[RMDB]
RNA sequence: GGGAACGACUCGAGUAGAGUCGAAAAGCUGCGGUACGUACCUAUCGAUGCUAGUACGCUGAUCUAGUACCUGAUCGAGUACCCAUGCUCUAGUACGCUAGGUACCAUGGUAGUACUGCUAGGAUCGCUCUCGACAGGCUUUCGAGCCUGUCGAGAGAAAAGAAACAACAACAACAAC
Reactivity to 2A3 in 0.01 (KOAc 150mM, MgCl2 10mM, bicine 150mM(pH8.5), 24C), signal-to-noise 1, nucleotides 027 to 126: g050c040u020g000c040g000g000u010a030c070g090u010a010c040c000u030a050u080c010g040a050u060g190c000u020a000g000u040a020c110g000c100u070g000a130u070c060u050a060g000u010a030c000c010u080g050a160u080c130g030a090g050u000a010c000c000c030a060u120g020c020u000c000u050a060g070u150a010c050g000c000u000a010g000g000u010a000c040c000a130u220g090g000u000a060g010u010a020c000u020g000c000u050a070g020g010a060u080c040g000
Reactivity to DMS in 0.01 (KOAc 150mM, MgCl2 10mM, bicine 150mM(pH8.5), 24C), signal-to-noise 1, nucleotides 027 to 126: g000c080u000g030c020g020g000u000a020c030g000u010a040c000c010u000a150u000c000g030a090u000g030c030u010a040g010u010a010c160g010c030u000g030a040u030c120u040a180g010u000a020c000c080u000g000a070u000c140g000a150g030u000a000c020c040c000a080u020g010c010u010c120u000a120g010u010a080c140g000c070u000a050g000g010u010a030c010c170a110u000g000g000u050a180g000u000a040c000u000g060c030u040a070g000g010a030u020c070g040